[RMDB]
RNA sequence: GGGAACGACUCGAGUAGAGUCGAAAAGCAACUGCAGUCCAUUUGGGAACAGGAGCGAGUGCCCCUUUGGAUCAAGCCAUACAAGAUUCUUGUGAUUUCGGCUGAUAGUGGCAUGAUUGAACCAGUAACUAAUUAGUCGGUUCGCCGACUAAUUAGUAAAAGAAACAACAACAACAAC
Reactivity to DMS in 0.01 (KOAc 150mM, MgCl2 10mM, bicine 150mM(pH8.5), 24C), signal-to-noise 6, nucleotides 027 to 126: g010c030a050a210c020u000g000c140a130g020u010c010c020a300u000u010u030g010g010g020a110a070c030a030g000g000a260g000c050g000a110g020u000g000c020c000c030c060u000u020u010g020g020a070u010c040a060a070g010c010c010a100u000a050c050a020a020g000a200u010u000c020u010u000g000u000g010a140u000u010u010c140g010g000c030u000g010a070u000a050g010u010g000g000c020a040u010g020a160u010u000g000a100a120c030c020a090g010u010a100
Reactivity to 2A3 in 0.01 (KOAc 150mM, MgCl2 10mM, bicine 150mM(pH8.5), 24C), signal-to-noise 5, nucleotides 027 to 126: g010c010a000a030c010u050g000c040a080g050u000c010c000a090u180u170u230g090g000g000a050a030c010a030g030g020a010g030c020g010a040g020u030g010c020c010c010c010u070u090u110g110g000a040u040c050a080a010g020c000c010a040u030a120c030a090a070g080a300u180u140c000u080u070g080u050g090a200u040u120u240c090g020g010c000u030g020a020u030a090g050u050g050g010c020a020u050g010a130u110u100g010a030a020c000c000a020g020u040a040